This 177-nucleotide RNA was probed chemically with 2A3 and DMS. It was measured as part of the RMDB library OK2TST. For DMS the reverse transcriptase was MarathonRT.
[RMDB]
RNA sequence: GGGAACGACUCGAGUAGAGUCGAAAAAGGUACGUACCUGCAUAUAUCACGAUCCGUACCUGUAUGUGCGUACUAGGUGAUCUAUAGUACUGAUCCUAGUGAGCAGUACACCAUGGACACGAUCACGCCCCGUCAGUACGUUCGCGUACUGACGGGGAAAAGAAACAACAACAACAAC
Reactivity to 2A3 in 0.01 (KOAc 150mM, MgCl2 10mM, bicine 150mM(pH8.5), 24C), signal-to-noise 2, nucleotides 027 to 126: a020g020g010u020a020c020g000u000a010c010c000u080g000c020a040u130a010u060a030u250c060a010c130g130a080u100c090c050g000u060a040c060c000u030g000u000a030u010g040u000g000c020g020u030a020c010u040a080g180g000u000g020a080u020c000u010a090u080a200g000u000a010c010u010g000a000u000c020c000u030a090g010u040g280a000g000c000a000g000u000a020c050a040c030c040a060u120g060g000a010c030a020c110g000a040u000c000a010c040g010
Reactivity to DMS in 0.01 (KOAc 150mM, MgCl2 10mM, bicine 150mM(pH8.5), 24C), signal-to-noise 2, nucleotides 027 to 126: a090g010g010u000a000c030g010u000a020c040c070u010g000c110a070u000a120u000a040u020c110a120c090g000a030u000c140c100g000u000a000c050c000u000g010u000a050u010g000u010g000c000g010u010a020c030u000a060g010g010u000g020a050u000c010u000a100u000a180g000u000a000c000u000g000a030u000c000c010u010a130g010u000g020a020g000c010a030g010u010a040c020a090c130c200a080u000g000g000a070c170a100c180g030a070u000c080a030c150g010